[RMDB]
RNA sequence: GGGAACGACUCGAGUAGAGUCGAAAAUCUAUCACCAGCCCAUGUUUACGACACGAAUGGGCUGUUGCAAAUUACGUAUAGCUCUUGCAACAACGUGUCGAAACGUUCCCAAGCUAUACGCCACAAAGACGGUGAAAAGGUUCGCCUUUUCACCGUCAAAAGAAACAACAACAACAAC
Reactivity to DMS in 0.01 (KOAc 150mM, MgCl2 10mM, bicine 150mM(pH8.5), 24C), signal-to-noise 1, nucleotides 027 to 126: u000c030u010a020u020c060a040c020c070a050g000c010c000c000a100u000g020u010u010u000a120c140g010a030c010a020c020g020a160a080u000g020g070g000c010u000g010u000u000g000c080a080a110a100u000u000a090c010g000u000a020u000a000g000c010u000c180u000u000g020c080a050a050c080a060a140c050g000u000g010u000c050g000a050a110a140c080g010u000u000c020c020c000a170a050g000c000u000a000u000a000c020g020c150c160a030c280a030a150a070
Reactivity to 2A3 in 0.01 (KOAc 150mM, MgCl2 10mM, bicine 150mM(pH8.5), 24C), signal-to-noise 2, nucleotides 027 to 126: u040c010u020a140u120c010a040c090c040a020g030c000c010c000a000u080g130u110u170u060a130c090g010a000c010a010c030g080a120a100u090g030g050g040c030u020g000u000u000g000c000a000a040a120u170u080a070c020g010u000a000u000a020g000c000u000c020u090u130g050c020a020a040c000a040a020c030g010u010g030u040c010g020a120a020a000c030g030u010u000c000c010c000a000a000g020c030u000a000u000a000c010g040c040c000a110c040a040a040a000